[RMDB]
RNA sequence: GGGAACGACUCGAGUAGAGUCGAAAAACGUAUUACGUGUGGCUUUGCGCCUAUGCGCGUACCCGCAGAUGGCACCGACCCGGACCUUGUUCUGGCGGACUGCCUGACCGAGAUUCGCCGGCUGCGUGCGGUGGCGGGACCUCAGAUCCCCGAGGGCCGUACAAAGACCAUUCGUGGUCUUUGUACGAAAAGAAACAACAACAACAAC
Reactivity to 2A3 in 0.01 (KOAc 150mM, MgCl2 10mM, bicine 150mM(pH8.5), 24C), signal-to-noise 1, nucleotides 027 to 156: a070c150g090u180a130u130u130a050c070g000u060g000u010g050g000c020u040u100u300g110c050g020c010c030u150a210u280g020c000g000c020g010u020a040c000c020c000g000c020a100g030a180u300g040g000c010a000c000c000g120a150c000c000c070g020g000a030c060c070u040u050g010u030u000c030u070g000g020c090g070g140a170c160u190g040c000c000u000g030a010c000c060g050a050g000a060u160u280c090g010c000c000g030g010c110u070g030c010g020u030g010c000g170g040u060g060g000c000g000g000g000a020c000c000u050c000a060g000a210u000c000c000c000c000g000a070g000g000g000c000